[RMDB]
RNA sequence: GGGAACGACUCGAGUAGAGUCGAAAAAUCCAAAGGCAUGGGAUGUUUUCUCUCUCUGUAUACUCUUUGGUUUUUGUAGAAUGUAAUGUUCUGUCAGGCUCUGAGUACAUUUACUGUAGAGUGAGACAAUAGAGAGUGCAUUCGUGCACUCUCUAUUAAAAGAAACAACAACAACAAC
Reactivity to 2A3 in 0.01 (KOAc 150mM, MgCl2 10mM, bicine 150mM(pH8.5), 24C), signal-to-noise 2, nucleotides 027 to 126: a000u010c020c000a050a030a010g040g010c060a030u080g030g010g010a040u080g130u060u070u220u020c070u030c000u000c000u000c010u020g050u050a140u060a150c030u050c060u050u030u040g020g020u020u040u000u040u070g070u020a040g020a090a020u040g030u180a120a030u130g030u030u030c000u010g070u050c010a020g160g000c000u030c010u030g030a010g000u030a030c010a210u170u300u090a050c040u080g160u250a010g000a020g030u050g020a050g000a010c040
Reactivity to DMS in 0.01 (KOAc 150mM, MgCl2 10mM, bicine 150mM(pH8.5), 24C), signal-to-noise 6, nucleotides 027 to 126: a050u010c000c000a040a050a060g000g010c100a030u000g010g010g010a060u010g000u000u010u010u010c160u010c060u000c020u000c020u010g010u000a120u010a100c100u010c010u000u000u000g010g000u000u000u000u000u010g020u010a060g010a050a050u000g020u010a100a070u020g010u000u000c020u000g010u000c020a030g000g000c010u000c040u000g000a040g010u000a030c300a120u010u000u000a030c030u000g010u010a030g010a020g010u000g000a300g000a020c070
This 177-nucleotide RNA was probed chemically with 2A3 and DMS.
The 2A3 profile rests on 1,694 reads.
As a SHAPE reagent, 2A3 marks flexible, mostly unpaired nucleotides at the ribose 2'-OH.
The reactions ran in a buffer of 150 mM KOAc, 10 mM MgCl2 and 150 mM bicine (pH 8.5), at 24 C.
DMS adducts were read by reverse transcription with MarathonRT.
The DMS profile rests on 7,758 reads.